Structure probing data (2A3) for a 207-nucleotide construct.

RNA sequence: GGGAACGACUCGAGUAGAGUCGAAAACCUGAGAGUUCGCUCUCAGGAAAAAGCGUACUACGUCUAACGCACUUACGCUACCCACCAAAUCCCAAAUAGGAUUUGAGGCGUACUGGUGCGUAAUCGUAUCGCAAAAACUCUCCCUUCGGGGAGAGAAUCUGAUCGAAGAGUUCGCUCUUCGAUCAGAAAAAGAAACAACAACAACAAC
Reactivity to 2A3 in 0.01 (KOAc 150mM, MgCl2 10mM, bicine 150mM(pH8.5), 24C), signal-to-noise 1, nucleotides 027 to 156: c000c010u000g000a010g000a000g030u100u150c230g060c050u020c000u000c010a030g030g110a060a140a000a040a020g020c040g040u140a130c110u010a000c000g080u080c120u170a110a000c000g000c000a000c010u020u020a000c000g000c000u100a230c060c060c000a000c150c000a020a000a000u030c000c000c020a180a300a300u270a100g000g000a050u000u010u000g030a030g000g000c030g000u010a060c120u170g100g000u030g000c000g000u010a000a060u040c000g030u000a000u300c020g000c000a030a000a000a110a160c020u000c000u020c020c020c000u010u110c300g040g000g000g000a000g000a000g010a000a010